Conditions: 150 mM KOAc, 10 mM MgCl2 and 150 mM bicine (pH 8.5), 24 C. The record gives the reactivity of an RNA of 170 nucleotides to DMS and 2A3. As a SHAPE reagent, 2A3 marks flexible, mostly unpaired nucleotides at the ribose 2'-OH. It was measured as part of the RMDB library 15KLIB. The DMS profile rests on 53,047 reads. DMS adducts were read by reverse transcription with MarathonRT.
RNA sequence: GGGAACGACUCGAGUAGAGUCGAAAAUAGUGUGGUCCAAAAGGAUGGUGUUGAAAACACUCCUCCUCACUAUUUUACUCUUGGAUGCAAAAUUUUAACGCUCACCCCACGCAACAAGUGGAGUGGCACCGUAUCUACUUCGGUAGAUACAAAAGAAACAACAACAACAAC
Reactivity to DMS in 0.01 (KOAc 150mM, MgCl2 10mM, bicine 150mM(pH8.5), 24C), signal-to-noise 9, nucleotides 027 to 129: u000a000g040u010g020u000g000g000u130c120c140a100a060a090a020g010g000a080u080g040g080u030g010u020u050g100a100a070a070a050c000a020c000u000c010c020u030c000c030u000c000a000c000u000a000u020u010u020u000a070c030u030c060u060u060g080g030a100u070g080c140a060a060a100a110u070u100u060u090a100a110c120g000c040u080c020a000c040c000c030c000a030c040g000c170a110a180c230a160a130g030u000g030g020a010g030u000g030g040c010a050c150c070
Reactivity to 2A3 in 0.01 (KOAc 150mM, MgCl2 10mM, bicine 150mM(pH8.5), 24C), signal-to-noise 9, nucleotides 027 to 129: u010a000g000u000g010u020g020g020u140c130c030a060a070a030a040g040g010a050u240g080g150u030g070u040u140g180a100a080a020a000c010a010c000u010c000c000u010c000c000u000c000a000c000u000a010u000u020u010u040a070c020u030c000u100u120g160g050a100u130g090c110a080a130a160a200u130u180u130u160a160a060c100g010c030u100c050a010c000c010c020c000a000c000g080c030a080a300c050a300a070g010u000g010g000a010g000u000g000g000c000a010c010c070